[RMDB]
RNA sequence: GGGAACGACUCGAGUAGAGUCGAAAACAUCGGACUGGCUCAUUCUCGGAGAGGGCGGACGGUCCUGAGAACUCUUAUCUUCCUGCUUAGAAGAGGAGUCUCCUGGACGCUUCCGCCCGCUCGGGAUAACGACUACGCUUCGGCGUAGUCAAAAGAAACAACAACAACAAC
Reactivity to DMS in 0.01 (KOAc 150mM, MgCl2 10mM, bicine 150mM(pH8.5), 24C), signal-to-noise 4, nucleotides 027 to 129: c060a000u030c060g000g000a130c040u030g000g000c100u050c070a110u050u020c020u000c000g010g020a030g000a110g020g020g040c000g000g000a030c110g020g030u010c010c020u030g020a100g010a080a080c000u030c010u020u060a160u030c010u020u030c000c200u070g080c190u100u130a120g000a030a070g030a030g050g000a030g030u020c020u020c030c090u000g000g020a030c010g040c050u020u000c010c030g000c030c000c010g010c000u000c030g030g010g000a080u050a060a080c180
Reactivity to 2A3 in 0.01 (KOAc 150mM, MgCl2 10mM, bicine 150mM(pH8.5), 24C), signal-to-noise 8, nucleotides 027 to 129: c030a080u070c040g020g030a030c030u060g040g010c020u030c050a080u130u000c020u010c040g070g010a060g000a010g010g000g010c000g010g000a000c010g000g000u000c000c000u030g040a110g010a090a050c000u010c000u070u140a110u100c000u010u020c020c060u110g190c100u230u280a060g000a000a000g010a010g000g000a000g000u000c030u000c030c050u030g000g010a010c030g040c190u000u000c000c000g000c000c000c000g010c000u000c000g000g000g000a000u040a060a020c080

Chemical mapping of a 170-nucleotide RNA with DMS and 2A3. For DMS the reverse transcriptase was MarathonRT. The DMS profile rests on 14,228 reads. The data come from the RNA Mapping Database (RMDB), library 15KLIB. The RNA was probed in 150 mM KOAc, 10 mM MgCl2 and 150 mM bicine (pH 8.5) at 24 C.